[RMDB]
RNA sequence: GGGAACGACUCGAGUAGAGUCGAAAAACAUAAACCACCAGUUCAUCGCUUGUUGAUGACUUUGCAAGCUCUUCAAUAAUGGAAUCUUCCAAAGAUUGCUUUUUCUUGGCCUCCUUUUCCAUCAAUAAGCACCCGUAGGGUUCGCCCUACGGGUGCUAAAAGAAACAACAACAACAAC
Reactivity to 2A3 in 0.01 (KOAc 150mM, MgCl2 10mM, bicine 150mM(pH8.5), 24C), signal-to-noise 1, nucleotides 027 to 126: a010c080a090u150a010a140a010c040c070a000c000c000a020g060u140u050c000a080u170c050g000c070u110u080g040u100u030g100a060u000g040a060c050u070u010u040g040c020a010a070g000c000u030c050u050u030c050a000a090u140a220a000u010g080g080a000a100u160c000u110u020c090c020a050a050a050g000a170u040u080g080c040u000u060u040u040u070c040u040u080g040g000c000c040u030c000c020u000u000u000u000c010c000a040u090c020a080a030u100a100